[RMDB]
This 177-nucleotide RNA was probed chemically with DMS and 2A3.
The RNA was probed in 150 mM KOAc, 10 mM MgCl2 and 150 mM bicine (pH 8.5) at 24 C.
Source: RMDB library OK2TST, as collected in RNAgym.
Values are in units of 0.01, from 0 to 300, in steps of 10.
DMS adducts were read by reverse transcription with MarathonRT.

RNA sequence: GGGAACGACUCGAGUAGAGUCGAAAAUUGACAAGAAAUGCUUUUACUUGGUUGAAUGCAAACAGAAUUGCUUUGUUUCUUAAAUCAGUUUAAGAUAUGAACAAUGAUUUCAGACAGUACCAAGUCCCUGAAGGAGAGAAUUCGUUCUCUCCUUCAGAAAAGAAACAACAACAACAAC
Reactivity to DMS in 0.01 (KOAc 150mM, MgCl2 10mM, bicine 150mM(pH8.5), 24C), signal-to-noise 5, nucleotides 027 to 126: u000u010g010a130c070a070a120g020a080a130a090u010g010c020u000u010u010u000a100c010u010u000g010g020u010u010g010a070a090u000g000c170a080a040a070c160a080g010a250a060u000u000g010c170u000u000u000g020u000u000u000c010u000u000a010a010a050u010c200a110g010u000u000u000a010a030g000a030u000a030u000g000a020a010c010a000a020u010g000a170u000u000u000c050a050g010a260c100a070g010u000a030c000c010a030a030g000u000c090c070
Reactivity to 2A3 in 0.01 (KOAc 150mM, MgCl2 10mM, bicine 150mM(pH8.5), 24C), signal-to-noise 3, nucleotides 027 to 126: u030u010g030a030c040a080a110g090a150a190a040u090g020c010u080u050u030u040a020c010u000u000g030g000u010u050g050a100a030u040g020c070a030a030a040c050a090g170a220a100u040u010g040c000u090u010u020g020u010u040u000c000u000u010a020a020a040u060c040a120g010u050u020u010a050a030g030a040u110a060u130g020a010a000c000a000a080u070g030a120u010u050u000c000a030g010a030c020a020g060u070a000c010c010a000a010g020u040c010c000